[RMDB]
RNA sequence: GGGAACGACUCGAGUAGAGUCGAAAAGAUGAUGCCUCUCGGUUACUUCAUACCGUGCUUGCAAAGGCUGAGUUAUGCUGUUCUGCACGCAUGGUUUGGAGAGAGUGGUGCAAUGUCUGUGGCAUAAAAGGCUAUUACUUCGGUAAUAGCAAAAGAAACAACAACAACAAC
Reactivity to 2A3 in 0.01 (KOAc 150mM, MgCl2 10mM, bicine 150mM(pH8.5), 24C), signal-to-noise 9, nucleotides 027 to 129: g060a040u190g020a040u100g020c000c000u030c010u010c030g070g010u110u150a060c000u010u010c010a000u010a020c000c000g000u000g000c000u010u000g000c000a020a060a080g020g000c030u070g060a100g270u260u180a140u300g020c010u040g110u190u060c050u030g000c000a000c020g000c000a010u010g010g000u020u020u010g000g000a020g010a000g000a000g000u050g020g010u040g010c010a010a020u020g020u010c060u040g030u040g010g000c020a020u130a130a140a040a020g170
Reactivity to DMS in 0.01 (KOAc 150mM, MgCl2 10mM, bicine 150mM(pH8.5), 24C), signal-to-noise 7, nucleotides 027 to 129: g020a040u000g030a040u010g030c030c020u020c010u000c060g030g030u030u060a050c010u000u000c000a030u000a000c010c010g030u000g020c020u010u010g000c000a020a050a210g000g000c000u030g000a140g070u060u060a090u010g030c020u020g030u020u030c180u000g000c020a000c050g030c000a000u000g000g000u000u000u000g000g020a010g040a100g000a020g000u020g010g040u000g020c020a030a030u030g010u020c020u010g000u000g000g000c010a060u050a050a060a060a050g000
This 170-nucleotide RNA was probed chemically with 2A3 and DMS. For DMS the reverse transcriptase was MarathonRT. The 2A3 profile rests on 59,402 reads. The reactions ran in a buffer of 150 mM KOAc, 10 mM MgCl2 and 150 mM bicine (pH 8.5), at 24 C. High 2A3 reactivity points to a flexible backbone, as in loops and unpaired stretches.